[RMDB]
RNA sequence: GGGAACGACUCGAGUAGAGUCGAAAACAGGGACAACAAGGUCAUUGUGCAGGGCAUCACCGGCAGUGAGGCCACCGUCCAUACCGCGCGAAUGCUGCGGGCGGGCACGCAAAUCGUCGGCGGUGUGCAAUGCUUCUGUUUUCGAACAGAAGCAUUGAAAAGAAACAACAACAACAAC
Reactivity to 2A3 in 0.01 (KOAc 150mM, MgCl2 10mM, bicine 150mM(pH8.5), 24C), signal-to-noise 5, nucleotides 027 to 126: c030a030g010g000g040a020c020a100a000c020a110a110g090g020u040c030a090u050u110g030u080g050c060a060g040g020g000c020a030u040c030a030c020c000g040g000c030a050g030u040g080a050g100g000c010c010a030c030c020g030u020c020c000a020u130a070c000c010g000c010g000c000g110a220a100u280g020c060u100g000c050g030g020g010c030g010g030g000c040a010c050g020c010a060a100a090u080c040g040u020c030g050g020c010g020g000u020g000u030g020
Reactivity to DMS in 0.01 (KOAc 150mM, MgCl2 10mM, bicine 150mM(pH8.5), 24C), signal-to-noise 8, nucleotides 027 to 126: c080a120g000g010g000a060c040a080a070c100a100a080g000g010u000c050a090u000u000g010u000g020c050a100g000g010g020c050a050u000c070a060c050c040g000g000c050a080g010u000g010a120g010g000c030c040a090c120c070g010u000c050c020a050u000a110c030c020g020c020g010c010g010a080a100u010g010c070u010g030c020g010g000g020c080g000g010g000c040a060c110g000c050a020a090a090u000c060g020u000c040g020g010c020g000g010u000g020u000g010
Record summary
Chemical mapping of a 177-nucleotide RNA with 2A3 and DMS. It was measured as part of the RMDB library OK2TRN. The reactions ran in a buffer of 150 mM KOAc, 10 mM MgCl2 and 150 mM bicine (pH 8.5), at 24 C. For 2A3 the reverse transcriptase was SuperScript II with manganese. Values cover nucleotides 27 to 126. The DMS profile rests on 14,480 reads.